[RMDB]
RNA sequence: GGGAACGACUCGAGUAGAGUCGAAAAUAUUACAUCUUCGGAUGUAAUAACUGGUGGUGGCUGGCUUGUUGGUAGUGGCGCAACUGUUGCCAUGACUGCGCAAUCGCUCUGAAUUCGUUCAGAGCAAGCUUAAGACAGAGUUCGCUCUGUCUUAAGCAAAAGAAACAACAACAACAAC
Reactivity to DMS in 0.01 (KOAc 150mM, MgCl2 10mM, bicine 150mM(pH8.5), 24C), signal-to-noise 4, nucleotides 027 to 126: u000a020u010u000a010c000a000u000c010u000u010c220g030g000a000u000g010u000a010a010u000a030a120c100u000g000g020u000g000g020u000g010g010c030u000g010g000c060u000u000g010u000u000g020g010u010a050g020u010g010g000c030g020c060a080a120c110u010g010u000u000g010c020c020a060u000g000a060c080u000g000c060g000c150a110a090u000c150g000c000u000c000u010g000a020a040u000u010c190g000u000u000c000a010g000a020g010c000a030a010
Reactivity to 2A3 in 0.01 (KOAc 150mM, MgCl2 10mM, bicine 150mM(pH8.5), 24C), signal-to-noise 2, nucleotides 027 to 126: u030a000u000u000a000c000a020u010c020u030u020c200g120g000a000u010g010u000a000a000u000a010a040c060u050g020g020u040g000g020u030g020g080c050u010g000g010c020u060u120g030u020u050g110g010u030a060g030u050g050g000c000g000c040a100a100c060u080g060u190u090g020c060c000a040u050g050a050c030u040g000c020g000c100a040a060u120c070g000c000u000c000u010g020a020a020u080u060c180g040u070u010c030a000g000a000g000c000a000a010